[RMDB]
Conditions: 150 mM KOAc, 10 mM MgCl2 and 150 mM bicine (pH 8.5), 24 C. Chemical mapping of a 177-nucleotide RNA with DMS and 2A3. For 2A3 the reverse transcriptase was SuperScript II with manganese. The data come from the RNA Mapping Database (RMDB), library OK2TST. Values cover nucleotides 27 to 126.
RNA sequence: GGGAACGACUCGAGUAGAGUCGAAAAUCGACGAUGGCGCGUUCCAGCGCCGGUUCGCUGGGACUGUGGAUGAGGUUGCAGGCGAACGGUUGUCCGCCGAGUUCUGUGGCCAGUUCGCCCAGCGCCACCUGACCCUCCGAUUCGUCGGAGGGUCAGGAAAAGAAACAACAACAACAAC
Reactivity to DMS in 0.01 (KOAc 150mM, MgCl2 10mM, bicine 150mM(pH8.5), 24C), signal-to-noise 1, nucleotides 027 to 126: u000c020g010a040c030g000a190u000g010g010c040g020c120g000u010u010c070c030a100g000c010g020c100c100g010g010u010u000c020g020c010u000g010g000g000a140c060u020g020u000g010g000a060u000g010a170g010g010u000u000g010c000a050g010g000c010g000a080a090c020g000g010u000u030g000u010c150c100g000c000c030g000a210g010u010u000c030u000g010u000g000g000c020c000a300g020u000u000c040g030c010c020c070a090g060c020g000c030c020a050
Reactivity to 2A3 in 0.01 (KOAc 150mM, MgCl2 10mM, bicine 150mM(pH8.5), 24C), signal-to-noise 1, nucleotides 027 to 126: u130c010g030a030c060g080a090u130g020g000c000g000c040g080u130u060c080c030a050g030c010g020c000c000g000g000u120u000c000g020c000u000g000g010g030a040c020u080g220u300g180g030a050u000g050a140g090g050u040u010g000c020a010g000g000c060g020a100a100c020g010g000u190u130g190u080c000c050g030c010c010g010a030g030u270u200c010u060g010u020g000g030c010c000a020g000u040u050c000g040c020c010c000a010g030c010g000c010c000a040